Source: RMDB library M2PK50, as collected in RNAgym. The record gives the reactivity of an RNA of 177 nucleotides to DMS and 2A3. 2A3 adducts were read by reverse transcription with SuperScript II with manganese. For DMS, 2,533 sequencing reads were counted.

RNA sequence: GGGAACGACUCGAGUAGAGUCGAAAAGUACUACCGUUCGCGGUAGUACAAAUAAUCCAGCCUGGAAAGGCUGGAGCCAUAACUAUGGUAAAGGCACCAUAGAAAGAGCAGAGUUCGCUCUGCUCAACCGUAUUUUACGGUUCGCCGUAAAAUACGGAAAAGAAACAACAACAACAAC
Reactivity to DMS in 0.01 (KOAc 150mM, MgCl2 10mM, bicine 150mM(pH8.5), 24C), signal-to-noise 3, nucleotides 027 to 126: g000u000a000c000u000a000c000c000g030u000u010c250g040c030g000g000u010a000g000u000a000c000a020a080a050u000a200a120u000c000c000a020g010c000c000u000g010g050a130a130a030g020g000c000u010g000g000a010g010c060c050a050u010a130a150c010u000a010u000g010g000u010a040a090a130g010g010c100a090c000c000a000u000a010g000a080a070a070g000a020g000c000a010g000a020g010u000u020c200g000c000u000c010u000g000c000u010c000a020a050
Reactivity to 2A3 in 0.01 (KOAc 150mM, MgCl2 10mM, bicine 150mM(pH8.5), 24C), signal-to-noise 4, nucleotides 027 to 126: g000u010a000c000u000a000c000c010g030u020u060c250g000c000g100g000u000a000g000u000a000c000a000a000a010u070a000a000u000c010c000a010g010c000c000u060g100g150a200a060a010g000g000c000u000g000g000a000g000c000c000a100u090a230a070c000u000a010u020g010g000u090a140a230a260g210g020c080a020c010c000a000u000a000g090a090a120a000g010a010g000c010a000g010a020g020u080u070c130g040c080u000c000u010g010c000u000c000a000a000

Description
For DMS the reverse transcriptase was MarathonRT. Values cover nucleotides 27 to 126.